Structure probing data (DMS and 2A3) for a 177-nucleotide construct. The 2A3 profile rests on 6,372 reads. For 2A3 the reverse transcriptase was SuperScript II with manganese.
RNA sequence: GGGAACGACUCGAGUAGAGUCGAAAAGGAGGGCAGUUUUUCUGUGUUGUCGUUAGAGGCCGGUUUUGCGACGUGCGCGAGACCUUGAUGCUGAUUCCGGCCUAUUUGCAUCGGUCGUUUGCCUCCAGGCAGCUGGCGGGUUCGCUCGCUGGCUGCCAAAAGAAACAACAACAACAAC
Reactivity to DMS in 0.01 (KOAc 150mM, MgCl2 10mM, bicine 150mM(pH8.5), 24C), signal-to-noise 6, nucleotides 027 to 126: g010g010a020g000g010g030c050a060g010u010u020u020u020u010c040u030g030u000g020u010u010g010u000c010g020u000u020a070g010a120g000g010c010c020g000g000u010u010u020u030g010c030g010a070c070g000u030g010c020g020c080g000a070g000a030c010c030u020u020g020a020u010g020c000u020g010a140u020u020c010c020g000g000c010c020u000a090u010u010u010g000c010a010u000c020g000g000u000c010g020u010u020u010g000c010c010u000c010c010a140
Reactivity to 2A3 in 0.01 (KOAc 150mM, MgCl2 10mM, bicine 150mM(pH8.5), 24C), signal-to-noise 6, nucleotides 027 to 126: g060g010a040g030g060g060c050a050g040u060u050u030u080u080c060u060g040u010g030u130u250g000u030c020g010u040u120a050g010a060g090g000c000c000g010g000u020u080u190u260g010c020g000a010c010g040u090g010c020g010c020g020a040g000a030c010c010u040u270g010a020u030g020c030u060g030a060u140u060c000c000g000g000c000c000u010a060u010u080u080g000c010a010u010c010g000g000u000c000g010u090u160u100g040c010c010u000c010c000a010